[RMDB]
RNA sequence: GGGAACGACUCGAGUAGAGUCGAAAACUAAAUCGGAUUCACUAAAAUAUUCAUCGUUUUCACUUAAAGCAAUAAUAACCUGGGUGAUCAACGGAUGGCUUAACAGCCGCAUCACAGUAUGGCUAAGAAUUGUUUUAUUAUUUAUACGUAGAUAUUGCAACUGUCUGUACUUCGGUACAGACAGUUGAAAAGAAACAACAACAACAAC
Reactivity to 2A3 in 0.01 (KOAc 150mM, MgCl2 10mM, bicine 150mM(pH8.5), 24C), signal-to-noise 1, nucleotides 027 to 156: c030u120a070a020a200u190c050g030g000a050u060u180c030a060c150u080a050a200a050a040u070a050u070u140c040a050u070c030g020u000u000u030u060c080a030c000u030u090a000a000a000g020c010a020a020u040a180a030u000a050a020c000c000u060g000g000g130u000g010a000u010c060a090a000c000g030g030a130u110g060g030c000u110u050a170a000c010a020g040c000c010g000c020a030u000c010a000c010a000g110u080a130u080g050g000c000u040a030a000g000a180a050u000u000g000u000u040u000u010a010u030u060a170u030u160u040a100u000a050c000g000u000a000g000a090u100a020u180u110g050